[RMDB]
RNA sequence: GGGAACGACUCGAGUAGAGUCGAAAAGGACAUCGAUGGGGAUGGUGUGCCCAACUCCAAGGACGAAGACAUCGAUGGCGAUGGCAAGGCAAAUCACGAGGAUGAUGAUCUAGAUGGUGAUGGCACAUCCGCUAAUGCGAUUCGUCGCAUUAGCGGAAAAAGAAACAACAACAACAAC
Reactivity to DMS in 0.01 (KOAc 150mM, MgCl2 10mM, bicine 150mM(pH8.5), 24C), signal-to-noise 2, nucleotides 027 to 126: g030g010a070c040a020u000c010g000a080u000g010g020g000g000a110u010g000g030u010g020u000g000c000c010c040a060a190c040u000c040c020a040a100g030g000a100c090g010a090a060g010a100c050a000u010c040g130a130u000g010g000c060g020a070u000g010g000c060a120a050g010g070c090a070a150a050u000c030a030c080g010a090g000g000a040u000g000a120u030g000a060u000c020u010a100g000a100u000g000g010u020g050a070u000g000g000c090a060c120a070
Reactivity to 2A3 in 0.01 (KOAc 150mM, MgCl2 10mM, bicine 150mM(pH8.5), 24C), signal-to-noise 1, nucleotides 027 to 126: g010g000a050c000a050u020c030g040a060u040g030g060g020g060a000u080g000g040u030g090u130g050c050c030c000a000a000c000u000c040c010a000a040g090g050a050c040g060a000a000g010a020c000a040u110c030g030a000u040g070g040c020g010a040u030g000g010c080a120a110g050g060c030a050a000a060u140c050a040c060g040a040g110g000a080u060g010a020u020g030a010u040c020u110a040g000a060u120g030g040u050g030a050u040g000g000c000a020c000a150
An RNA of 177 nucleotides, treated with DMS and 2A3 and read out base by base. Values cover nucleotides 27 to 126. 2A3 adducts were read by reverse transcription with SuperScript II with manganese. DMS adducts were read by reverse transcription with MarathonRT. The RNA was probed in 150 mM KOAc, 10 mM MgCl2 and 150 mM bicine (pH 8.5) at 24 C.